[RMDB]
RNA sequence: GGGAACGACUCGAGUAGAGUCGAAAAGGGACUUAGUUGGCUGAUUGAGGAACAAUGCGUCAACCUGGGUUCUCCUGAUGAAGGCGGCAGGUGGAGACGGAUCCGGGUCCGGGACCCAUCUCGAGUUCUACGAACUAUAAUUCGUUAUAGUUCGUAGAAAAGAAACAACAACAACAAC
Reactivity to DMS in 0.01 (KOAc 150mM, MgCl2 10mM, bicine 150mM(pH8.5), 24C), signal-to-noise 6, nucleotides 027 to 126: g000g010g000a050c050u010u000a060g010u000u000g000g010c020u020g000a060u000u000g010a200g020g020a150a110c060a030a030u000g000c090g000u000c020a040a030c070c060u000g010g000g010u000u010c030u000c010c010u010g000a100u020g000a100a070g010g010c080g000g000c060a040g010g020u000g010g000a090g000a110c060g000g000a050u010c040c090g010g010g000u010c030c030g000g010g010a140c040c010c020a050u010c030u000c050g000a130g020u000u000
Reactivity to 2A3 in 0.01 (KOAc 150mM, MgCl2 10mM, bicine 150mM(pH8.5), 24C), signal-to-noise 9, nucleotides 027 to 126: g040g000g010a010c020u050u060a030g020u040u020g020g020c060u090g080a060u030u070g040a160g120g070a180a080c020a030a040u080g100c030g020u020c010a010a020c030c090u050g020g010g000u040u020c050u050c020c020u070g060a140u140g060a070a030g060g000c020g000g020c050a020g010g030u040g020g030a040g010a030c030g020g000a010u040c040c030g100g010g030u020c030c000g020g020g040a040c010c020c000a040u030c040u020c020g080a070g040u020u000